[RMDB]
RNA sequence: GGGAACGACUCGAGUAGAGUCGAAAAUCGUCAUGGCCAGUUCAGAUUUCGACACCCAUGGAGCCAAUACCAGAAGCUGGGAACUCUUUGUCGCCAAUGUGCGUCUUCUAUGGAGGCUCUUGCUUCAGUGUAUGCCUUAUUUCGAUAAGGCAUACACAAAAGAAACAACAACAACAAC
Reactivity to DMS in 0.01 (KOAc 150mM, MgCl2 10mM, bicine 150mM(pH8.5), 24C), signal-to-noise 3, nucleotides 027 to 126: u010c050g000u000c070a070u000g010g020c040c060a090g000u020u010c040a110g010a120u000u000u000c090g020a090c040a180c050c030c040a090u010g000g000a080g010c000c050a110a140u010a060c090c050a130g000a030a020g030c020u000g010g000g000a040a070c040u000c020u000u000u000g000u010c020g020c020c010a130a080u000g000u000g010c010g000u010c020u010u010c190u000a070u010g010g010a060g010g000c050u000c020u000u000g010c010u000u000c020a170
Reactivity to 2A3 in 0.01 (KOAc 150mM, MgCl2 10mM, bicine 150mM(pH8.5), 24C), signal-to-noise 5, nucleotides 027 to 126: u050c020g060u030c020a070u060g040g000c020c010a020g000u070u100c040a050g010a160u060u070u110c050g020a010c020a070c010c030c010a040u050g080g010a020g030c030c000a040a040u110a090c040c030a050g020a040a000g030c010u060g000g000g110a150a140c020u030c000u090u110u150g030u040c010g010c020c020a250a300u250g090u180g030c020g010u000c050u180u010c060u100a190u210g020g000a010g020g010c000u000c010u020u050g000c010u000u020c030a030
An RNA of 177 nucleotides, treated with DMS and 2A3 and read out base by base. For DMS, 3,298 sequencing reads were counted. The data come from the RNA Mapping Database (RMDB), library OK2TRN. Reactivities are given for positions 27 through 126.